RNA sequence: GGGAACGACUCGAGUAGAGUCGAAAAAUACAAUACUUGAAUUCUCGAUGUAGAUGCUACAUAGUUGGUUCUCAUCCUUCAGAGACUACGAGUGUAAUAAGAGCAUCCGUCGACAAAAGGAUCACCCUAAGAUGAUCAUCUCGUGGCUAUUGAGAACGGUAUCUGAAAAGUUCGCUUUUCAGAUACCAAAAGAAACAACAACAACAAC
Reactivity to DMS in 0.01 (KOAc 150mM, MgCl2 10mM, bicine 150mM(pH8.5), 24C), signal-to-noise 2, nucleotides 027 to 156: a060u020a100c060a070a150u010a060c050u010u000g010a100a130u000u000c030u000c010g030a050u000g020u000a110g000a110u010g010c030u000a090c090a060u000a140g020u000u000g040g000u000u000c020u000c020a120u000c070c060u030u000c080a190g000a170g020a040c010u000a020c020g020a040g030u000g010u010a070a130u000a110a180g000a070g030c000a020u000c010c030g000u010c040g000a100c100a040a040a040a100g000g000a070u000c030a040c020c000c030u000a170a100g010a030u000g000a070u000c030a140u000c010u000c020g030u010g000g010c020u010a190u000u000g000a090g000a070a100c140
Reactivity to 2A3 in 0.01 (KOAc 150mM, MgCl2 10mM, bicine 150mM(pH8.5), 24C), signal-to-noise 7, nucleotides 027 to 156: a000u190a030c070a070a090u060a140c050u090u180g050a110a080u240u030c020u010c040g020a020u030g060u160a080g010a030u020g010c020u020a050c020a080u110a080g040u040u080g040g010u090u020c000u010c020a090u130c030c020u130u150c060a060g040a050g020a190c010u000a010c000g010a050g040u020g040u050a070a170u100a270a030g070a000g040c000a000u000c010c010g020u000c000g030a030c040a020a120a010a010g040g000a040u080c020a070c010c030c020u080a060a040g050a140u100g010a030u070c020a040u020c030u000c020g020u020g020g000c020u060a060u140u120g010a020g010a020a000c030